[RMDB]
RNA sequence: GGGAACGACUCGAGUAGAGUCGAAAAUCUAUGCGCUUCGGCGCAUAGAAAAUAAAAUCAGCGGUAAUACGAGGCGUAAUAUUACCGCUGAACGCCUCGAAAAAACUCUUAAGUUCGCUUAAGAGAAGUGAGGAUAGAAGUUCGCUUCUAUCCUCACAAAAGAAACAACAACAACAAC
Reactivity to 2A3 in 0.01 (KOAc 150mM, MgCl2 10mM, bicine 150mM(pH8.5), 24C), signal-to-noise 2, nucleotides 027 to 126: u000c000u000a010u020g010c000g020c000u030u040c300g140g000c000g000c000a000u000a000g000a000a000a000a000u050a010a020a000a050u040c000a000g010c000g010g010u010a010a000u010a020c020g040a080g140g090c040g060u020a050a040u040a060u090u050a140c000c000g000c000u000g010a000a000c000g020c000c000u030c020g010a120a040a030a060a140a160c020u020c000u020u040a020a010g020u030u120c260g050c120u030u010a000a000g010a010g000a100a000
Reactivity to DMS in 0.01 (KOAc 150mM, MgCl2 10mM, bicine 150mM(pH8.5), 24C), signal-to-noise 1, nucleotides 027 to 126: u000c000u010a000u010g000c000g010c000u000u010c150g020g000c000g010c000a010u000a000g000a030a040a070a110u000a090a060a060a050u000c000a000g030c010g020g000u000a000a020u000a030c070g000a130g020g000c040g000u020a090a200u000a020u000u000a060c000c020g010c010u000g000a050a000c090g020c020c010u000c100g040a030a100a070a110a160a050c000u000c000u010u000a020a010g040u000u020c270g020c000u020u000a000a000g020a010g010a040a010
An RNA of 177 nucleotides, treated with 2A3 and DMS and read out base by base. For 2A3 the reverse transcriptase was SuperScript II with manganese. Conditions: 150 mM KOAc, 10 mM MgCl2 and 150 mM bicine (pH 8.5), 24 C.